RNA sequence: GGGAACGACUCGAGUAGAGUCGAAAAGACAUCAUGCCAACACUACAAGGUAAAACACAGUAACGAUUUGGCACGAUGUCAGCUCACGGACAAGUGUACAAAUUUAAUUCACUUGUCCGAAUGCUCGGGAGUGGCCAUAUUUCGAUAUGGCCACUCCAAAAGAAACAACAACAACAAC
Reactivity to DMS in 0.01 (KOAc 150mM, MgCl2 10mM, bicine 150mM(pH8.5), 24C), signal-to-noise 1, nucleotides 027 to 126: g000a000c000a020u000c000a160u000g000c000c000a020a000c290a090c170u030a000c000a080a160g000g000u040a050a200a170a300c270a250c090a130g000u000a090a090c300g090a200u000u000u000g000g030c000a000c160g000a000u000g130u000c000a020g000c020u000c220a300c020g000g000a000c000a000a000g000u000g000u000a040c300a070a020a070u000u000u000a050a130u220u000c000a000c000u000u000g000u000c000c000g000a000a000u130g000c060u060c220g000
Reactivity to 2A3 in 0.01 (KOAc 150mM, MgCl2 10mM, bicine 150mM(pH8.5), 24C), signal-to-noise 3, nucleotides 027 to 126: g000a000c000a000u000c000a000u000g000c000c000a030a000c000a010c130u020a020c030a110a070g100g040u170a130a080a130a020c040a040c050a020g020u050a010a070c100g120a260u000u000u090g000g000c000a000c020g000a000u000g000u000c010a020g020c000u000c010a050c000g000g000a000c020a020a020g000u030g020u070a040c170a030a150a060u230u300u270a040a110u100u040c000a000c000u000u000g000u000c010c000g000a000a010u100g030c030u030c000g090

The data come from the RNA Mapping Database (RMDB), libraries RFM100 and RFMREP. This 177-nucleotide RNA was probed chemically with DMS and 2A3. The reactions ran in a buffer of 150 mM KOAc, 10 mM MgCl2 and 150 mM bicine (pH 8.5), at 24 C. Values cover nucleotides 27 to 126. DMS adducts were read by reverse transcription with MarathonRT.